[RMDB]
The record gives the reactivity of an RNA of 177 nucleotides to DMS and 2A3. For DMS, 7,576 sequencing reads were counted. For DMS the reverse transcriptase was MarathonRT. For 2A3 the reverse transcriptase was SuperScript II with manganese. Values cover nucleotides 27 to 126.

RNA sequence: GGGAACGACUCGAGUAGAGUCGAAAAGAUAUGGACUAACGUCCUCGACGAUCAGUUGAUGUACGUAACAUCACUCGGAAACGAGUGUGGUACAUCAACUGGGAGAGGUUAUGGUAGUCCUAAGUCACACCUAAAAGGAGUUCGCUCCUUUUAGGUGAAAAGAAACAACAACAACAAC
Reactivity to DMS in 0.01 (KOAc 150mM, MgCl2 10mM, bicine 150mM(pH8.5), 24C), signal-to-noise 5, nucleotides 027 to 126: g010a070u000a300u000g010g010a020c000u000a000a030c010g010u000c000c000u010c000g020a120c280g000a050u020c000a000g000u000u000g010a000u000g010u010a010c010g010u010a100a170c220a060u010c010a010c000u000c000g010g010a110a130a200c000g020a020g010u000g020u000g020g000u000a000c000a000u000c000a000a000c000u000g010g000g010a060g000a020g000g010u010u010a020u000g000g010u000a010g000u000c000c000u000a010a080g010u000c040a260
Reactivity to 2A3 in 0.01 (KOAc 150mM, MgCl2 10mM, bicine 150mM(pH8.5), 24C), signal-to-noise 4, nucleotides 027 to 126: g060a030u110a050u210g010g010a000c010u020a070a000c050g040u010c050c050u040c040g300a300c030g000a110u030c010a000g000u000u010g020a000u010g000u030a000c070g110u150a200a200c070a280u300c010a030c000u000c000g050g020a090a100a080c020g000a010g000u010g000u010g020g000u020a000c010a010u000c000a000a010c000u000g000g010g000a010g000a010g010g070u270u300a140u280g040g030u010a000g000u020c000c000u010a200a010g000u000c010a010